Source: RMDB library OK1LIB, as collected in RNAgym. Structure probing data (2A3 and DMS) for a 177-nucleotide construct. The reactions ran in a buffer of 150 mM KOAc, 10 mM MgCl2 and 150 mM bicine (pH 8.5), at 24 C. 2A3 adducts were read by reverse transcription with SuperScript II with manganese.
RNA sequence: GGGAACGACUCGAGUAGAGUCGAAAAGAAUAUAAGAGCGUCUUCGCGUCUUGACGUGAAUGAGCCUAGACUGUAGGAUCUAGUGGGAUAGAAACGCUCACUCACAAAACGCUAUUCCACAUGAAGAGGAUCAUUAUCGAUUCGUCGAUAAUGAUCCAAAAGAAACAACAACAACAAC
Reactivity to 2A3 in 0.01 (KOAc 150mM, MgCl2 10mM, bicine 150mM(pH8.5), 24C), signal-to-noise 6, nucleotides 027 to 126: g060a080a050u150a020u060a180a090g010a000g000c000g030u000c010u010u010c010g010c010g020u020c120u170u210g120a000c030g010u010g010a030a010u100g020a000g020c000c000u030a060g080a180c100u070g160u210a030g030g050a100u040c030u050a060g000u010g040g000g000a010u000a020g040a010a120a010c010g000c010u000c010a040c010u090c000a070c010a070a120a080a010c030g000c020u020a020u020u000c000c010a020c000a040u180g090a070a060g110a080
Reactivity to DMS in 0.01 (KOAc 150mM, MgCl2 10mM, bicine 150mM(pH8.5), 24C), signal-to-noise 4, nucleotides 027 to 126: g010a140a160u060a140u000a070a060g010a030g000c020g030u000c010u010u010c020g020c010g000u010c030u060u000g030a070c030g030u000g010a030a060u020g010a080g010c010c050u000a020g010a140c200u050g030u020a040g010g000a170u010c020u020a080g010u000g000g010g000a000u010a020g010a100a060a050c040g000c000u000c000a100c170u000c100a070c180a030a060a050a080c280g020c000u020a030u000u000c010c020a010c010a120u040g010a130a130g010a300
For DMS the reverse transcriptase was MarathonRT. In probing experiments dimethyl sulfate is read out at A N1 and C N3, which are open when not base-paired. Reactivities are rounded to 0.1 and cut off at 0 and 3.